[RMDB]
RNA sequence: GGGAACGACUCGAGUAGAGUCGAAAAGUGCUUGAGCACUGUCGUUGCGACGAGAGUUCGAUGCGAUCCGGAAAGCAUUUGCUCUCUUGAUGUCGAUCCGGAAAGACAUCUGUGCUCUUGCACGAAAGGGUCUGCCGUGCUUCGGCAUGGUAGACCCAAAAGAAACAACAACAACAAC
Reactivity to DMS in 0.01 (KOAc 150mM, MgCl2 10mM, bicine 150mM(pH8.5), 24C), signal-to-noise 5, nucleotides 027 to 126: g000u000g030c010u020u010g020a020g000c000a040c000u000g000u000c020g010u020u020g030c100g000a040c030g000a040g000a060g010u020u010c220g000a010u000g000c000g020a280u010c030c020g000g000a090a130a300g000c000a000u000u010u030g020c040u020c040u000c020u020u000g000a010u010g010u000c010g000a210u010c010c020g020g000a050a140a270g010a110c000a000u000c030u010g010u000g010c000u000c030u010u000g000c000a010c010g010a040a070a090
Reactivity to 2A3 in 0.01 (KOAc 150mM, MgCl2 10mM, bicine 150mM(pH8.5), 24C), signal-to-noise 9, nucleotides 027 to 126: g000u000g000c000u010u010g000a000g000c000a010c020u040g030u010c040g150u150u300g170c150g030a020c020g000a010g010a010g050u110u210c110g010a020u010g000c010g040a120u050c020c020g040g050a060a040a010g000c000a010u020u050u170g020c000u010c000u000c000u020u060g020a020u020g030u080c010g010a060u030c030c020g020g050a060a040a010g010a010c000a010u010c020u030g000u000g000c000u000c000u000u000g000c000a000c000g000a030a010a010